[RMDB]
RNA sequence: GGGAACGACUCGAGUAGAGUCGAAAAGAACGAGUCGAUCCCGAAUGAGCGCCUACAUCGGGCUCCUGGGGUGAUCCAGAGACUAGACGGAGGCGACGUCUCGCGGGGCUGGCCUUCAGACAUAGUCCAACGCAACGGCCGGGAUGUAAGUGUUAGAUCAAUCUUACAUGUUCGCAUGUAAGAUUGAAAAAGAAACAACAACAACAAC
Reactivity to 2A3 in 0.01 (KOAc 150mM, MgCl2 10mM, bicine 150mM(pH8.5), 24C), signal-to-noise 2, nucleotides 027 to 156: g060a030a020c020g000a010g000u010c000g000a040u030c010c000c010g000a050a130u250g030a020g030c030g010c010c030u040a020c020a040u020c040g050g050g000c060u120c020c070u120g000g020g030g010u110g070a100u070c050c030a040g030a000g010a010c010u010a010g000a030c020g020g010a010g000g060c030g000a050c040g010u010c000u020c030g070c150g020g010g000g020c090u150g060g000c000c000u000u040c020a020g010a040c020a120u080a010g010u000c010c010a090a080c080g020c070a090a070c100g000g000c000c000g160g090g000a000u000g010u010a030a030g000u010g050u040u080a050g030a110
Overview: This 207-nucleotide RNA was probed chemically with 2A3. For 2A3, 1,682 sequencing reads were counted. 2A3 adducts were read by reverse transcription with SuperScript II with manganese.